About this RNA: Chemical mapping of a 177-nucleotide RNA with 2A3 and DMS. DMS adducts were read by reverse transcription with MarathonRT. For 2A3 the reverse transcriptase was SuperScript II with manganese. The reactions ran in a buffer of 150 mM KOAc, 10 mM MgCl2 and 150 mM bicine (pH 8.5), at 24 C. For 2A3, 1,284 sequencing reads were counted.
RNA sequence: GGGAACGACUCGAGUAGAGUCGAAAAGCUUGCACAUUUCAACGAAUACCAGCUCGACCAGCAAAUAGAAUACAGAUAUCUAUUAGGAAGGUACUACUUGUUGAACUCUCAAGUACAUAAUGCCUUACUCCAUCACGUAGUUCGCUACGUGAUGGAGAAAAGAAACAACAACAACAAC
Reactivity to 2A3 in 0.01 (KOAc 150mM, MgCl2 10mM, bicine 150mM(pH8.5), 24C), signal-to-noise 2, nucleotides 027 to 126: g000c010u040u070g060c070a060c000a160u050u060u030c050a030a020c050g020a070a060u000a060c000c020a050g020c020u030c040g120a050c060c050a000g030c010a020a030a000u030a020g020a040a060u170a180c090a030g050a050u100a030u190c010u000a000u020u020a050g140g030a080a040g030g000u000a050c000u030a020c000u020u070g020u030u030g040a060a070c000u030c000u000c050a010a070g020u060a030c000a090u220a110a080u110g050c000c000u060u020a100
Reactivity to DMS in 0.01 (KOAc 150mM, MgCl2 10mM, bicine 150mM(pH8.5), 24C), signal-to-noise 1, nucleotides 027 to 126: g050c070u000u020g000c120a030c130a040u000u000u000c010a110a020c050g000a080a120u000a070c080c030a020g000c050u000c010g020a230c080c140a050g000c080a170a030a020u000a020g020a130a080u000a300c280a090g000a060u020a080u000c020u020a010u000u020a120g020g000a150a060g000g020u000a050c140u010a050c020u000u000g010u000u000g010a040a050c150u000c160u010c010a010a000g040u000a030c140a080u010a050a070u010g000c020c000u000u020a070